[RMDB]
Source: RMDB library OK1LIB, as collected in RNAgym. The record gives the reactivity of an RNA of 177 nucleotides to DMS.
RNA sequence: GGGAACGACUCGAGUAGAGUCGAAAACGAGAUCAACCGGACCACGCCCCCAAUAAAGUGGCCUACGGUCAUCCGGCACCCAAAGACCGGCCAAGAGAUCCUCUACAUCUGCGCGACGGGCACCACCACUGCUUCGAUUUUUCGAAAUCGAAGCAGUAAAAGAAACAACAACAACAAC
Reactivity to DMS in 0.01 (KOAc 150mM, MgCl2 10mM, bicine 150mM(pH8.5), 24C), signal-to-noise 2, nucleotides 027 to 126: c060g000a150g010a040u010c100a190a060c040c010g030g010a060c060c050a040c110g000c130c000c010c030c030a090a080u040a080a120a070g020u000g020g000c060c020u010a090c130g000g000u010c030a100u030c030c000g000g000c050a080c030c030c060a000a080a060g030a100c000c030g010g000c030c030a080a080g010a070g040a080u000c000c040u000c020u000a070c050a000u010c010u000g030c050g010c060g020a020c040g010g030g020c060a080c020c030a090c070c090
Notes: For DMS the reverse transcriptase was MarathonRT. Values are in units of 0.01, from 0 to 300, in steps of 10. For DMS, 2,508 sequencing reads were counted. Conditions: 150 mM KOAc, 10 mM MgCl2 and 150 mM bicine (pH 8.5), 24 C.